[RMDB]
RNA sequence: GGGAACGACUCGAGUAGAGUCGAAAAGGUGGCUCGUUGUGGCGACACAACUCUCGUGAGAACGAGUCACCGAUUUAGCAUGUUCGUCCUACGAGGUCCCUGGACGAGGUGUAGGACGUUCAUGCGAGGGAUCCUUAACCUUCGGGUUGAGGAUCCCAAAAGAAACAACAACAACAAC
Reactivity to 2A3 in 0.01 (KOAc 150mM, MgCl2 10mM, bicine 150mM(pH8.5), 24C), signal-to-noise 6, nucleotides 027 to 126: g000g000u000g000g000c000u010c000g000u000u000g090u050g090g000c000g010a000c000a000c020a250a300c030u030c000u010c040g010u050g060a200g010a000a000c010g000a000g000u000c000a000c000c000g000a000u000u000u040a010g000c000a000u000g000u000u000c000g000u000c000c000u000a000c000g000a040g090g070u040c000c010c020u110g100g050a010c030g030a080g020g030u120g000u010a000g000g000a000c000g000u000u000c000a000u000g000c000g000a080
Reactivity to DMS in 0.01 (KOAc 150mM, MgCl2 10mM, bicine 150mM(pH8.5), 24C), signal-to-noise 3, nucleotides 027 to 126: g000g010u000g000g000c010u000c000g000u000u010g020u000g010g010c090g000a040c170a060c130a140a160c250u020c090u000c030g000u020g000a090g020a000a010c000g010a000g000u000c000a010c000c000g000a010u020u000u040a110g030c000a010u010g000u000u000c000g010u010c000c000u000a000c010g000a210g010g000u020c020c020c130u040g010g030a080c050g010a070g010g040u030g000u000a000g000g000a010c000g000u010u010c000a000u000g000c020g020a090